Structure probing data (2A3 and DMS) for a 207-nucleotide construct. It was measured as part of the RMDB library OK3TST. Conditions: 150 mM KOAc, 10 mM MgCl2 and 150 mM bicine (pH 8.5), 24 C. The DMS profile rests on 17,887 reads.

RNA sequence: GGGAACGACUCGAGUAGAGUCGAAAAGGAGGAAGGAUGUCCAAGCGGAGACGCCCUGAGGAAUCGCUCAUUAGAGUGUGCCUAACAGAUUGUGUUAGGGUUUACAGGUACGGUGGACCACUCUUCAGAAACCUCAGGGGACAGUGACCGUACCAUACGUAGUAGUGUAAUUCGUUACACUACUACGAAAAGAAACAACAACAACAAC
Reactivity to 2A3 in 0.01 (KOAc 150mM, MgCl2 10mM, bicine 150mM(pH8.5), 24C), signal-to-noise 5, nucleotides 027 to 156: g030g010a000g010g010a050a000g030g020a040u030g030u030c030c020a060a020g010c020g020g040a050g000a020c040g030c000c000c000u000g000a000g010g020a030a050u030c030g010c080u130c090a090u050u090a010g000a000g000u020g030u080g050c000c000u000a010a000c010a060g300a300u200u220g110u020g000u060u000a000g010g040g040u040u050u090a060c050a020g000g000u000a010c010g000g010u020g010g030a000c000c010a000c000u010c000u060u060c060a030g020a020a010a010c000c000u000c000a000g000g000g000g000a000c000a010g020u020g030a000c000c000g000u000a000c000c000a010u020a050
Reactivity to DMS in 0.01 (KOAc 150mM, MgCl2 10mM, bicine 150mM(pH8.5), 24C), signal-to-noise 5, nucleotides 027 to 156: g000g010a080g010g010a090a070g010g020a090u000g020u000c030c030a090a130g020c080g030g010a170g000a120c050g020c000c000c010u000g010a020g020g000a040a290u000c030g030c210u000c070a140u010u000a060g000a010g020u000g010u000g020c020c010u000a020a030c020a090g010a250u000u000g010u010g010u000u000a020g010g020g030u000u000u000a100c090a110g030g020u000a010c020g010g010u000g000g000a080c030c010a030c010u010c000u000u000c090a100g010a050a050a260c010c000u000c010a040g010g010g010g010a030c030a060g000u000g020a090c000c000g000u000a020c010c010a050u000a070